An RNA of 177 nucleotides, treated with 2A3 and DMS and read out base by base. DMS adducts were read by reverse transcription with MarathonRT. Source: RMDB library OK2TRN, as collected in RNAgym. The RNA was probed in 150 mM KOAc, 10 mM MgCl2 and 150 mM bicine (pH 8.5) at 24 C. The DMS profile rests on 10,615 reads. Reactivities are rounded to 0.1 and cut off at 0 and 3. For 2A3, 3,393 sequencing reads were counted.
RNA sequence: GGGAACGACUCGAGUAGAGUCGAAAAGGACAAUCAAUACCUGCAAGUUGAUGGUCAGGAAAUCAAAUUUAUCAAAGGGAUUUUUGCUAUUUUUGGUCAUGGUAAUGUACUAGGAGUCGGGCAGGCAAGCACUAUAUCAUUUCGAUGAUAUAGUGCUAAAAGAAACAACAACAACAAC
Reactivity to 2A3 in 0.01 (KOAc 150mM, MgCl2 10mM, bicine 150mM(pH8.5), 24C), signal-to-noise 4, nucleotides 027 to 126: g060g000a000c020a030a060u080c000a030a040u040a160c010c010u020g050c050a050a130g030u040u030g070a060u020g010g040u060c030a030g040g120a070a070a010u070c020a000a010a080u140u180u120a090u130c050a070a040a030g090g030g060a130u090u070u050u080u080g000c020u050a120u050u040u000u070u110g020g020u020c030a040u070g010g010u080a130a060u160g030u070a040c030u010a070g030g090a050g010u050c040g000g010g050c010a020g030g030c040a040
Reactivity to DMS in 0.01 (KOAc 150mM, MgCl2 10mM, bicine 150mM(pH8.5), 24C), signal-to-noise 6, nucleotides 027 to 126: g010g010a050c050a070a040u010c040a050a060u010a120c060c020u000g010c080a120a120g010u000u000g000a040u010g010g020u010c030a100g010g000a080a090a040u000c030a030a040a060u000u000u000a030u000c040a030a040a050g010g010g010a080u000u010u000u000u000g000c050u000a030u000u000u000u000u000g010g010u000c050a050u000g010g010u010a050a060u000g000u000a040c050u000a060g000g010a060g020u000c050g000g010g010c030a030g000g010c160a080